[RMDB]
RNA sequence: GGGAACGACUCGAGUAGAGUCGAAAAGGUUCAGUUCGUUACGGAGGAGGAUGACACCUCUAUGGUAAUUGGUCCUCCGUGUGCUUCACCAGAAUGGUGAUAGCCACGGGAACGCGGUUUGAACCGACAGUGCAUAUGGCUUCGGCCAUAUGCACUGAAAAGAAACAACAACAACAAC
Reactivity to DMS in 0.01 (KOAc 150mM, MgCl2 10mM, bicine 150mM(pH8.5), 24C), signal-to-noise 3, nucleotides 027 to 126: g000g010u010u010c010a020g010u010u000c050g020u010u010a030c040g020g030a160g000g010a030g010g000a070u000g020a210c270a110c020c010u010c110u000a050u010g010g030u010a040a090u010u010g020g010u000c020c000u010c000c000g020u000g010u020g010c000u000u000c000a020c000c000a240g000a130a100u010g010g000u010g010a010u000a000g000c000c000a000c010g000g010g010a020a020c060g020c140g020g000u010u000u010g010a010a010c000c010g010a270
Reactivity to 2A3 in 0.01 (KOAc 150mM, MgCl2 10mM, bicine 150mM(pH8.5), 24C), signal-to-noise 3, nucleotides 027 to 126: g000g000u000u000c000a020g010u030u070c020g030u070u060a060c060g040g070a030g000g010a010g070g020a110u110g070a040c030a070c080c020u020c070u040a110u150g010g060u080a110a160u090u210g100g040u110c000c000u000c000c020g020u010g020u080g000c000u000u000c000a000c000c010a040g300a300a300u300g050g000u010g010a020u130a030g020c000c000a020c000g000g010g020a020a010c050g000c050g040g010u040u120u050g000a020a000c030c000g010a000